[RMDB]
RNA sequence: GGGAACGACUCGAGUAGAGUCGAAAAACAUAGUUUGGCCGACGUCAUACCAUUGAAGACGAAUCGUUAAAGACACCAGCUCGUCUUAUAGGAGGCCAUUUAGCAAAAACAGUCCUGUAGGAACCAAACGUAGUUAAGCGUUCGCGCUUAACUACGUAAAAGAAACAACAACAACAAC
Reactivity to DMS in 0.01 (KOAc 150mM, MgCl2 10mM, bicine 150mM(pH8.5), 24C), signal-to-noise 2, nucleotides 027 to 126: a100c120a050u010a070g000u010u010u000g000g000c020c010g020a150c060g010u000c050a110u010a190c030c080a120u000u040g020a100a040g010a050c020g000a040a120u010c150g000u000u000a090a060a110g020a080c120a040c030c120a040g000c150u010c040g000u010c000u020u000a050u000a050g000g000a150g010g010c000c030a030u000u000u000a050g000c080a000a040a060a050a050c080a060g000u020c060c010u000g010u000a030g020g010a090a100c090c090a030a070
Reactivity to 2A3 in 0.01 (KOAc 150mM, MgCl2 10mM, bicine 150mM(pH8.5), 24C), signal-to-noise 1, nucleotides 027 to 126: a000c020a050u140a120g080u050u020u060g050g010c040c000g000a040c050g010u090c040a040u050a270c050c010a090u040u230g030a040a000g020a020c000g020a040a020u050c040g050u010u150a170a230a000g060a010c060a090c050c000a090g020c030u020c010g050u030c040u010u090a110u010a110g050g000a020g010g000c080c000a000u000u000u020a010g000c010a010a000a000a120a120c000a040g110u040c000c000u030g060u140a120g020g120a000a100c030c010a020a240